[RMDB]
RNA sequence: GGGAACGACUCGAGUAGAGUCGAAAAAUGUGCAUGCCACACUUGUGAGUCUCAAAAGCUCCAGAUGCGUGUGUCCUGGCCAGCAGUCUGUGCAUGAGUGGGCACUGUGGCUGUCCCUUGUCUGCCCUCUGCUUUCCCACGACUGAAUUGGGAUUCAAUACUCCGAUGCUUUCGAGCAUCGGAGUAUAAAAGAAACAACAACAACAAC
Reactivity to 2A3 in 0.01 (KOAc 150mM, MgCl2 10mM, bicine 150mM(pH8.5), 24C), signal-to-noise 1, nucleotides 027 to 156: a000u080g100u090g030c050a050u110g010c000c000a040c020a000c000u050u060g070u210g170a000g070u050c020u030c150a050a070a050a000g000c010u000c000c050a050g050a160u080g140c070g100u110g000u000g030u020c000c000u020g150g040c060c010a000g030c080a010g070u030c090u190g060u120g050c010a030u010g040a030g020u060g010g000g000c000a030c000u070g020u120g000g050c010u010g000u000c030c000c000u000u100g070u020c070u130g040c000c000c000u040c010u000g020c050u050u100u000c020c000c000a070c030g210a100c080u110g090a110a230u110u090g050g010g000a010u030u030c020a030
An RNA of 207 nucleotides, treated with 2A3 and read out base by base.
Conditions: 150 mM KOAc, 10 mM MgCl2 and 150 mM bicine (pH 8.5), 24 C.